Structure probing data (2A3 and DMS) for a 177-nucleotide construct. The DMS profile rests on 5,888 reads.

RNA sequence: GGGAACGACUCGAGUAGAGUCGAAAAAGAGUGGGUUCGUCGAGGCGGCGCAGCCGCUCGAUGAGGGCCACCUUGGCCGCUUGCGCGGGAGCCUGUGCCCUGGCGGAAACCGCAUGAAUGAGGAACGUCCCUUCAGUCUAUUCGUAGACUGAAGGGAAAAAGAAACAACAACAACAAC
Reactivity to 2A3 in 0.01 (KOAc 150mM, MgCl2 10mM, bicine 150mM(pH8.5), 24C), signal-to-noise 3, nucleotides 027 to 126: a000g210a050g010u040g030g010g030u040u050c050g010u050c050g030a100g100g240c040g020g000c240g000c230a000g050c020c010g000c010u000c010g000a000u010g000a090g000g020g080c000c010a080c020c020u000u040g040g010c000c040g070c070u010u110g040c070g000c020g100g050g010a010g040c000c020u110g040u090g060c000c000c000u010g050g000c000g000g070a120a030a030c020c010g010c060a060u170g000a070a150u130g000a110g000g030a110a000c020g080
Reactivity to DMS in 0.01 (KOAc 150mM, MgCl2 10mM, bicine 150mM(pH8.5), 24C), signal-to-noise 3, nucleotides 027 to 126: a010g000a120g030u020g000g000g020u000u010c000g000u000c010g000a050g000g010c010g020g000c010g020c220a190g020c020c020g010c000u000c000g000a030u020g000a060g000g000g000c000c020a010c050c090u000u000g000g020c050c020g000c030u020u020g030c180g010c020g030g030g010a110g010c090c010u010g000u000g020c020c040c030u010g000g000c000g000g010a040a040a090c060c020g000c030a110u030g000a110a100u010g000a120g010g000a140a080c160g010
About this RNA
The data come from the RNA Mapping Database (RMDB), library OK1LIB. 2A3 adducts were read by reverse transcription with SuperScript II with manganese. The reactions ran in a buffer of 150 mM KOAc, 10 mM MgCl2 and 150 mM bicine (pH 8.5), at 24 C. The 2A3 profile rests on 1,452 reads.